The record gives the reactivity of an RNA of 177 nucleotides to 2A3 and DMS.
RNA sequence: GGGAACGACUCGAGUAGAGUCGAAAACAUACGGACUUCGGUCCGUAUGAAAGAACCUCAAAUUGACGCAAACUUCCGCGUCAACGCGAGGAAGCGAGGAAAAAAUCGAGGUGUUCGCACCUCGAAACCGAAUACAAAAGUUCGCUUUUGUAUUCGGAAAAGAAACAACAACAACAAC
Reactivity to 2A3 in 0.01 (KOAc 150mM, MgCl2 10mM, bicine 150mM(pH8.5), 24C), signal-to-noise 5, nucleotides 027 to 126: c000a000u010a000c000g010g000a000c010u030u080c250g050g010u000c010c000g000u000a000u000g010a000a000a000g040a040a090c000c000u000c000a010a030a020u000u010g010a000c010g000c010a030a210a300c200u280u090c150c110g000c000g000u000c000a000a010c000g000c010g010a010g000g020a020a010g080c050g080a140g060g050a150a120a020a010a000a030u040c000g000a000g000g000u010g020u050u050c170g040c060a000c000c000u010c010g000a000a000a000
Reactivity to DMS in 0.01 (KOAc 150mM, MgCl2 10mM, bicine 150mM(pH8.5), 24C), signal-to-noise 5, nucleotides 027 to 126: c010a000u000a010c000g000g000a010c000u010u010c200g040g000u000c000c000g000u000a000u010g000a060a100a070g010a100a110c000c000u010c010a030a300a050u000u000g000a010c020g020c020a060a120a110c260u010u020c200c170g000c010g000u000c000a010a000c040g000c300g010a020g000g010a060a090g000c120g010a100g000g000a010a030a050a040a140a090u000c000g020a010g000g020u000g010u010u020c190g010c010a040c020c000u000c010g000a000a050a090
High DMS reactivity at an A or C suggests that its Watson-Crick edge is free. The 2A3 profile rests on 9,673 reads. Conditions: 150 mM KOAc, 10 mM MgCl2 and 150 mM bicine (pH 8.5), 24 C.